RNA sequence: GGGAACGACUCGAGUAGAGUCGAAAACAGCGUGCCUGGGUAGAGUUUGAACUCACAGGGCUGCUGAUGCGCCGCUAACGUCUGGUAAAGCAGACGGCUGUCAUCCAGCAGCGGAUCGAACUCCGCCCCGCGGUAUAGGGUUCGCCCUAUACCGCGGAAAAGAAACAACAACAACAAC
Reactivity to 2A3 in 0.01 (KOAc 150mM, MgCl2 10mM, bicine 150mM(pH8.5), 24C), signal-to-noise 1, nucleotides 027 to 126: c030a000g090c050g160u090g010c000c000u050g020g030g040u070a030g010a040g030u040u050u090g030a050a070c030u020c120a130c070a140g200g200g010c010u020g000c000u010g030a010u030g040c030g000c000c030g000c050u040a220a160c070g060u000c000u030g100g000u130a100a030a080g130c010a000g000a000c000g010g000c010u000g020u040c000a010u030c090c060a020g000c000a000g010c000g000g040a030u020c000g020a010a010c000u000c000c000g020c040c010
Reactivity to DMS in 0.01 (KOAc 150mM, MgCl2 10mM, bicine 150mM(pH8.5), 24C), signal-to-noise 1, nucleotides 027 to 126: c150a080g030c080g000u000g020c080c030u000g040g000g030u000a090g000a010g020u000u000u000g000a040a090c150u000c140a180c230a290g000g040g030c030u020g010c010u000g020a010u010g000c080g010c020c070g000c090u080a080a150c100g030u000c000u000g020g000u010a110a130a230g020c010a020g010a010c000g000g000c000u000g000u000c000a000u000c140c080a020g010c000a020g010c010g000g000a100u000c000g000a020a020c010u000c000c010g000c050c010
Description
Source: RMDB library OK2TST, as collected in RNAgym. An RNA of 177 nucleotides, treated with 2A3 and DMS and read out base by base. Reactivities are given for positions 27 through 126. For 2A3 the reverse transcriptase was SuperScript II with manganese. The reactions ran in a buffer of 150 mM KOAc, 10 mM MgCl2 and 150 mM bicine (pH 8.5), at 24 C.